[RMDB]
RNA sequence: GGGAACGACUCGAGUAGAGUCGAAAAUCUAUUACGUUUUAAUAGACUGAAAAACGUUUUACUUGUCAUAAAAGUUUUUCGUUACUUGUUUAUAUAUGUAUAUACGCUGUGAUAAGGACCAGAACUGGAGGUCAUCAUGAUUCGUCAUGAUGACCUCAAAAGAAACAACAACAACAAC
Reactivity to 2A3 in 0.01 (KOAc 150mM, MgCl2 10mM, bicine 150mM(pH8.5), 24C), signal-to-noise 1, nucleotides 027 to 126: u020c000u000a090u040u030a050c000g120u000u000u000u130a230a170u140a140g000a060c120u130g050a020a020a020a020a020c000g010u000u000u000u020a060c040u030u090g070u070c000a000u090a140a140a050a080g020u000u000u000u000u160c020g050u000u000a010c010u080u230g120u070u180u000a020u000a070u000a040u190g010u000a100u000a000u040a010c000g030c110u070g000u050g030a100u000a050a020g070g010a060c000c000a090g000a170a040c000u020g070
This 177-nucleotide RNA was probed chemically with 2A3. Values are in units of 0.01, from 0 to 300, in steps of 10. The 2A3 profile rests on 396 reads.